[RMDB]
RNA sequence: GGGAACGACUCGAGUAGAGUCGAAAAAUCAGAGGGCGCUAUCAUGCAAACUAGGAUUGUCUGCUCAUGCACAGAAUCAACUACCGAUAACUAACAGUGCAUGAAGGUUAGUUAUUCCAUAUUAAUUAAAACUCGUAAUUCUUCGGAAUUACGAGAAGGGUUUUAGAUACUUCGGUAUCUAAAACCCAAAAGAAACAACAACAACAAC
Reactivity to 2A3 in 0.01 (KOAc 150mM, MgCl2 10mM, bicine 150mM(pH8.5), 24C), signal-to-noise 1, nucleotides 027 to 156: a000u090c040a030g020a080g030g080g000c040g030c000u040a110u300c050a040u270g020c020a020a030a030c040u030a020g020g010a030u030u020g020u000c030u040g000c000u000c000a020u010g010c010a010c010a000g110a100a100u200c010a080a120c030u140a060c000c100g070a000u000a000a000c030u000a010a010c000a020g000u000g000c000a000u000g010a080a010g050g000u000u000a010g010u010u000a070u070u100c040c000a110u120a070u300u300a110a100u080u120a050a070a070a070c000u040c000g000u000a000a000u000u010c010u000u040c050g130g000a000a010u000u000a000c000g000a000g000a000a000